[RMDB]
The record gives the reactivity of an RNA of 207 nucleotides to DMS and 2A3. For DMS, 4,104 sequencing reads were counted. The RNA was probed in 150 mM KOAc, 10 mM MgCl2 and 150 mM bicine (pH 8.5) at 24 C. 2A3 adducts were read by reverse transcription with SuperScript II with manganese.
RNA sequence: GGGAACGACUCGAGUAGAGUCGAAAACGCCAUCGGUGUCGUCAUUGAGGCGGCCGAGGCAACCAACGACCAGGAGAAGGCCAGCGGCAAACCGCAGGGCAAUGACGAGGAGCCUGAUCAGGCCAAGUCGGCGCAUCCGGUUGAGCCGUCCGCACUGAUAGGUAUAUAUCUUCGGAUAUAUACCUAUAAAAGAAACAACAACAACAAC
Reactivity to DMS in 0.01 (KOAc 150mM, MgCl2 10mM, bicine 150mM(pH8.5), 24C), signal-to-noise 3, nucleotides 027 to 156: c100g020c020c000a090u010c020g020g050u010g010u010c030g020u000c010a250u000u030g020a150g040g020c050g020g010c060c030g010a140g000g000c040a110a100c080c040a070a180c040g020a070c000c010a130g020g020a150g020a130a150g010g000c050c050a130g000c030g000g000c060a090a070a040c000c010g000c050a160g000g010g030c020a050a300u020g000a060c000g000a180g030g000a300g000c010c010u010g010a160u000c090a050g010g010c000c020a110a230g020u000c000g000g000c300g010c030a080u010c050c070g000g000u000u000g010a090g040c000c010g000u010c010c100g010c040a100c100u000g010
Reactivity to 2A3 in 0.01 (KOAc 150mM, MgCl2 10mM, bicine 150mM(pH8.5), 24C), signal-to-noise 4, nucleotides 027 to 156: c050g010c000c010a290u030c020g010g020u120g180u260c010g010u010c020a160u050u300g140a160g040g000c000g000g010c010c000g000a000g000g020c010a030a040c010c020a040a060c090g090a070c020c050a030g070g060a090g090a170a040g050g000c050c060a050g000c010g000g000c000a010a010a000c010c010g020c060a030g090g090g000c000a000a010u030g000a000c010g010a030g300g030a030g020c000c010u110g040a170u290c250a020g000g000c000c000a030a000g010u020c000g010g000c020g000c000a020u000c040c020g000g000u000u030g040a030g040c010c000g000u050c000c010g040c010a060c060u010g010